The record gives the reactivity of an RNA of 207 nucleotides to 2A3 and DMS. For DMS the reverse transcriptase was MarathonRT. The reactions ran in a buffer of 150 mM KOAc, 10 mM MgCl2 and 150 mM bicine (pH 8.5), at 24 C. Values cover nucleotides 27 to 156.
RNA sequence: GGGAACGACUCGAGUAGAGUCGAAAACCUUACUUCGGUAAGGCAAAGGUCCUAAGUCUCAUCAAACCUGGGAGCACGAUAAGUGUCGGAAACGACACUUUUGACGUGCUUUGAUCAGGGUAGAUGAGAUAUGGAGAAAGGCACUGUUCGCAGUGAAAGAGGUAAGAGAGUUCGCUCUCUUACCUCUAAAAGAAACAACAACAACAAC
Reactivity to 2A3 in 0.01 (KOAc 150mM, MgCl2 10mM, bicine 150mM(pH8.5), 24C), signal-to-noise 3, nucleotides 027 to 156: c000c010u000u010a000c000u040u080c300g100g000u020a000a000g010g040c060a110a000a030g130g060u010c000c000u070a080a060g000u000c010u000c030a000u000c010a120a300a220c010c010u030g000g030g000a030g000c020a000c000g010a020u010a090a010g000u000g000u000c010g000g070a130a060a030c030g000a000c000a010c000u030u000u000u060g080a030c020g000u000g000c000u020u000u000g010a020u060c010a000g090g000g000u020a010g000a000u000g000a000g000a000u000a000u030g000g010a020g040a100a130a100g090g060c030a000c050u010g040u120u130c150g030c110a050g130u200g030a120a070
Reactivity to DMS in 0.01 (KOAc 150mM, MgCl2 10mM, bicine 150mM(pH8.5), 24C), signal-to-noise 1, nucleotides 027 to 156: c000c010u000u000a000c000u000u000c300g070g000u010a010a020g020g040c010a040a040a060g000g000u000c000c010u000a050a230g020u000c030u000c000a030u030c000a030a160a300c010c000u000g010g000g010a010g020c000a010c020g020a160u000a040a010g040u020g000u000c000g000g000a160a090a280c010g050a010c010a000c000u000u000u010u010g050a230c120g020u010g020c000u010u010u010g000a120u010c070a010g010g000g010u010a230g010a030u000g000a010g000a010u000a060u000g000g010a130g000a050a160a080g000g030c000a040c020u000g050u000u000c220g010c030a040g000u000g000a070a110